[RMDB]
RNA sequence: GGGAACGACUCGAGUAGAGUCGAAAAAGGCAAAAGUAAUUGGCAAAGUAUUCUUCUCUUGUUUUGUAUUUUUUAUGGCUACAUAGUAGUUGUACAUAUUUAUAGGGUACAUAUAAUAUUUGUUAAAAGCAUACACUGUGUAAUGAUCAAAUCAGGAACUAGGGAUGGUAUUCGUACCAUCCCUAGUAAAAGAAACAACAACAACAAC
Reactivity to 2A3 in 0.01 (KOAc 150mM, MgCl2 10mM, bicine 150mM(pH8.5), 24C), signal-to-noise 2, nucleotides 027 to 156: a000g050g010c050a110a070a000a000g050u120a030a150u150u130g010g000c030a140a030a000g080u040a110u080u020c010u020u010c010u020c000u060u000g040u030u030u080u010g060u040a090u150u090u040u000u000u110a070u100g060g010c020u030a000c040a050u080a050g020u010a010g040u030u030g010u030a020c010a030u110a050u140u180u170a090u070a020g070g010g000u050a010c000a050u120a010u070a160a020u070a100u040u040u010g010u010u060a060a150a040a010g020c000a050u060a130c000a010c040u000g010u000g000u030a040a120u080g040a040u020c010a010a040a020u030c010a000g030g010a070
Reactivity to DMS in 0.01 (KOAc 150mM, MgCl2 10mM, bicine 150mM(pH8.5), 24C), signal-to-noise 1, nucleotides 027 to 156: a090g000g000c040a010a080a090a110g030u000a070a100u010u000g010g020c030a100a100a290g010u010a070u000u010c030u040u000c040u000c010u000u000g030u000u010u010u000g030u000a030u000u030u030u000u000u030a080u030g050g030c040u000a020c030a060u000a080g000u020a080g040u020u000g010u000a050c030a060u000a270u000u000u000a060u000a290g010g000g010u000a000c020a090u010a080u010a030a110u010a090u000u000u010g010u000u000a040a070a100a240g080c030a030u000a060c070a070c010u000g010u000g040u010a050a060u010g020a090u000c030a070a030a130u000c050a060g000g000a130
Source: RMDB library OK3TST, as collected in RNAgym. An RNA of 207 nucleotides, treated with 2A3 and DMS and read out base by base. Reactivities are given for positions 27 through 156. The reactions ran in a buffer of 150 mM KOAc, 10 mM MgCl2 and 150 mM bicine (pH 8.5), at 24 C.